[RMDB]
RNA sequence: GGGAACGACUCGAGUAGAGUCGAAAACUAAUCACAUAAAAAAUACUCCGAUACGGGGAGUCGAACCCCGGUCUCCACGGUGAAAGCGUGAUGUGAUAGCCGUUACACUAUAUCGGAUUAUAAACGGGGGAUACGCGUAGUUCGCUACGCGUAUCCCAAAAGAAACAACAACAACAAC
Reactivity to 2A3 in 0.01 (KOAc 150mM, MgCl2 10mM, bicine 150mM(pH8.5), 24C), signal-to-noise 1, nucleotides 027 to 126: c020u130a030a070u170c080a030c050a110u300a010a300a060a000a060a040u030a030c100u050c000c000g050a000u000a020c000g000g000g020g000a010g040u000c060g010a020a020c010c000c010c000g150g000u030c070u000c000c020a000c000g000g000u300g050a140a000a000g080c100g110u110g050a090u210g080u030g000a180u020a000g050c010c020g000u000u060a050c110a010c020u000a060u000a000u300c000g000g000a060u030u030a100u010a060a060a000c070g000g000